[RMDB]
RNA sequence: GGGAACGACUCGAGUAGAGUCGAAAAAAAGAUAUGGAUCACCAAGAUGAGGCGCAUCGGAGGACCAGUCGGAAACGACUGGUCUCCCCACCCGAUGAACUACGCUUGAGGUGAUCCUAAGUCAAAAGACGAGGAUAUAGUUCGCUAUAUCCUCGUCAAAAGAAACAACAACAACAAC
Reactivity to 2A3 in 0.01 (KOAc 150mM, MgCl2 10mM, bicine 150mM(pH8.5), 24C), signal-to-noise 1, nucleotides 027 to 126: a000a000a040g010a010u020a010u060g000g000a010u000c010a020c010c000a030a050g160a230u300g300a090g120g110c020g000c030a000u020c020g000g000a000g020g010a000c000c000a000g000u020c000g000g040a000a000a000c000g000a000c000u000g030g000u000c000u000c010c000c000c000a020c000c000c020g000a000u000g000a000a010c040u170a040c250g000c000u050u040g040a070g000g000u020g000a000u010c000c030u000a000a000g000u000c000a000a000a010a260
Reactivity to DMS in 0.01 (KOAc 150mM, MgCl2 10mM, bicine 150mM(pH8.5), 24C), signal-to-noise 2, nucleotides 027 to 126: a090a060a070g010a030u000a020u010g000g000a000u020c020a000c000c010a050a210g050a300u000g010a130g000g000c030g000c000a010u000c000g010g000a170g030g000a000c000c000a000g010u000c000g010g000a050a000a010c020g000a020c000u000g020g000u000c000u010c050c000c000c020a300c000c000c000g000a010u000g000a040a010c140u010a300c030g000c010u000u000g000a300g010g000u010g000a010u010c000c010u000a000a060g000u000c000a090a070a080a100

The record gives the reactivity of an RNA of 177 nucleotides to 2A3 and DMS. The data come from the RNA Mapping Database (RMDB), library TTRDES. High DMS reactivity at an A or C suggests that its Watson-Crick edge is free. Values cover nucleotides 27 to 126.